[RMDB]
This 177-nucleotide RNA was probed chemically with 2A3 and DMS. The data come from the RNA Mapping Database (RMDB), library 15KREP. For 2A3, 4,777 sequencing reads were counted.

RNA sequence: GGGAACGACUCGAGUAGAGUCGAAAACAAUUCUCUCUGGAACCACAACUAAUGUUGACAAAAUACGCCAGCUUCUCAAAGGUGUCACCCUUGACAAGUUGCGUGAUUAUUUAGCUGACUAUGACGUACUAUUAUAAUAGUUCGCUAUUAUAAUAGUAAAAGAAACAACAACAACAAC
Reactivity to 2A3 in 0.01 (KOAc 150mM, MgCl2 10mM, bicine 150mM(pH8.5), 24C), signal-to-noise 4, nucleotides 027 to 126: c010a030a070u080u020c010u000c000u000c040u080g050g050a060a040c030c010a030c040a110a020c040u140a130a080u150g020u040u020g030a010c030a010a070a010a020u060a020c000g010c020c020a010g000c000u030u000c010u000c000a060a060a020g030g000u040g110u130c060a050c010c000c010u010u020g000a010c010a020a010g000u010u010g040c080g020u010g030a040u020u080a050u010u050u050a010g030c020u020g020a030c030u040a080u190g050a030c040g030u010
Reactivity to DMS in 0.01 (KOAc 150mM, MgCl2 10mM, bicine 150mM(pH8.5), 24C), signal-to-noise 4, nucleotides 027 to 126: c130a130a300u010u000c030u000c030u010c070u010g010g020a090a110c040c040a060c070a040a060c090u000a110a070u010g020u010u000g010a060c060a080a060a040a030u000a030c020g000c030c010a020g000c000u000u000c180u000c010a010a020a040g000g000u000g000u010c190a080c060c010c030u000u000g000a020c050a010a010g010u000u000g010c130g010u000g010a060u000u000a020u000u000u000a090g020c010u000g010a020c020u000a100u000g010a120c160g010u000